Source information
This 207-nucleotide RNA was probed chemically with DMS and 2A3. The reactions ran in a buffer of 150 mM KOAc, 10 mM MgCl2 and 150 mM bicine (pH 8.5), at 24 C. For 2A3, 2,593 sequencing reads were counted.
RNA sequence: GGGAACGACUCGAGUAGAGUCGAAAACAAGCACAGAUUCACUCAAUAAGGUUGUAUAUGCAUCUGGAGCUAAUGAAGAACUGACAUUAGAAAGAAUGAUAGAGGAUACUAAAACGGAAGACAUUGAAGAAACAACCAUUAAUCGAGCUGUGAUAAGCGGAGUAUCAAUCUUCGGAUUGAUACUCCGAAAAGAAACAACAACAACAAC
Reactivity to DMS in 0.01 (KOAc 150mM, MgCl2 10mM, bicine 150mM(pH8.5), 24C), signal-to-noise 1, nucleotides 027 to 156: c040a070a070g010c020a090c000a090g040a090u000u000c020a180c170u000c040a060a120u000a180a100g010g030u010u020g100u010a150u000a080u000g000c100a060u010c010u000g000g000a130g060c030u020a030a040u000g010a090a090g000a060a130c040u000g010a130c050a040u000u000a090g090a080a020a120g010a060a070u000g020a150u010a040g040a070g000g000a090u030a130c050u010a010a050a050a040c000g050g000a040a100g010a080c040a080u030u000g000a060a110g010a060a060a060c010a020a030c010c010a100u020u010a050a150u000c030g000a070g080c030u000g060u000g030a120u000a020a090g010
Reactivity to 2A3 in 0.01 (KOAc 150mM, MgCl2 10mM, bicine 150mM(pH8.5), 24C), signal-to-noise 4, nucleotides 027 to 156: c040a010a040g030c020a000c010a030g020a030u120u090c020a060c040u040c050a020a180u110a220a020g010g050u020u020g010u050a070u020a010u260g030c040a040u000c030u020g040g020a040g040c020u070a050a000u110g030a040a110g060a140a040c090u080g030a020c030a020u020u020a030g030a040a070a000g030a090a040u100g030a000u050a070g050a040g060g030a020u050a170c050u140a040a080a070a000c030g040g000a070a000g020a020c020a020u050u260g040a070a060g020a080a090a000c010a010a010c000c030a080u040u120a050a040u100c040g000a010g000c010u010g000u050g050a080u050a120a010g070